The data come from the RNA Mapping Database (RMDB), library OK3TST. The record gives the reactivity of an RNA of 207 nucleotides to DMS and 2A3. For DMS the reverse transcriptase was MarathonRT. For DMS, 2,013 sequencing reads were counted. 2A3 adducts were read by reverse transcription with SuperScript II with manganese. Reactivities are given for positions 27 through 156.
RNA sequence: GGGAACGACUCGAGUAGAGUCGAAAAUGGAGGACAAGCCCCAGUUACUGUGAGGUUUACAAUAUUCCAAAUAAAAAUGUAUGUGUGUACAUACGUAGGGAUAUAUAAUAUCUGAACAAGAUACAAUAUUGUUAUGAUUCUCACAUCAUGAUACAAAGCCGAUCAUUAAUUUCGAUUAAUGAUCGGCAAAAGAAACAACAACAACAAC
Reactivity to DMS in 0.01 (KOAc 150mM, MgCl2 10mM, bicine 150mM(pH8.5), 24C), signal-to-noise 2, nucleotides 027 to 156: u000g020g020a160g010g010a160c030a140a230g020c010c010c010c080a150g010u000u000a050c130u020g010u020g000a090g000g010u000u050u000a040c030a090a100u000a060u000u000c030c030a100a140a300u000a010a160a090a130a070u010g020u000a000u000g050u010g000u000g030u010a030c010a020u010a020c030g050u010a100g020g010g010a030u000a020u000a060u000a150a060u010a010u000c000u020g010a140a120c160a130a010g010a050u000a010c050a050a080u000a130u010u000g000u010u000a030u000g020a050u000u000c060u000c050a010c070a120u010c060a070u000g020a160u000a060c110a160a090a240
Reactivity to 2A3 in 0.01 (KOAc 150mM, MgCl2 10mM, bicine 150mM(pH8.5), 24C), signal-to-noise 2, nucleotides 027 to 156: u050g030g000a070g020g080a040c010a070a030g030c000c000c010c000a020g050u070u130a070c020u030g000u000g000a020g000g020u060u060u020a000c020a050a010u000a010u090u080c010c060a000a230a030u300a040a080a010a000a000u140g000u050a000u000g030u000g060u020g120u180a030c000a020u020a010c000g020u040a030g020g040g000a000u000a000u000a010u010a100a140u030a010u030c030u030g020a020a010c030a130a020g000a010u060a040c020a020a120u070a060u140u020g070u110u050a030u070g060a070u190u000c020u020c060a010c000a060u090c050a010u100g050a040u210a070c060a030a030a080